[RMDB]
RNA sequence: GGGAACGACUCGAGUAGAGUCGAAAAACACCAAAACUGAAAACGGAAGGCAAUCCUUCCACGACGAUACUUACUUUCCUUUGAUCGUCGUUACUACUGGCAUCGCCACAAAGGAGAACAAACAUGAGCGCGGACACUGACUUCGGUCAGUGUCCAACAUAUCAAUUGACUUCGGUCAAUUGAUAUGAAAAGAAACAACAACAACAAC
Reactivity to DMS in 0.01 (KOAc 150mM, MgCl2 10mM, bicine 150mM(pH8.5), 24C), signal-to-noise 3, nucleotides 027 to 156: a120c070a260c040c010a120a030a100a280c130u000g000a080a050a080a110c060g030g010a030a000g080g070c090a080a160u010c020c010u010u000c020c010a120c000g010a030c000g030a020u000a050c080u000u000a070c090u000u000u000c060c030u000u000u000g000a050u000c010g020u010c010g050u000u080a050c040u000a070c070u000g010g010c020a110u000c020g010c020c000a070c020a060a100a140g040g030a080g000a070a150c070a070a070a060c050a090u010g000a120g000c060g020c130g040g020a020c010a000c000u000g000a040c000u000u010c300g060g030u000c000a000g030u000g020u010c010c010a010a060
Reactivity to 2A3 in 0.01 (KOAc 150mM, MgCl2 10mM, bicine 150mM(pH8.5), 24C), signal-to-noise 9, nucleotides 027 to 156: a000c090a090c020c020a060a040a060a050c160u230g090a080a070a030a040c060g010g000a000a000g030g010c150a050a200u270c010c000u000u010c000c000a000c000g000a000c000g000a000u090a160c030u070u040a040c020u090u170u050c010c000u050u020u070g010a010u000c000g020u000c000g000u030u070a040c060u020a030c020u000g000g010c020a190u130c140g020c010c010a030c040a030a050a010g050g020a030g020a070a030c040a100a110a010c060a110u210g070a050g120c150g010c090g050g000a000c000a000c000u000g010a000c000u040u080c210g020g000u000c000a000g000u000g000u000c000c000a000a000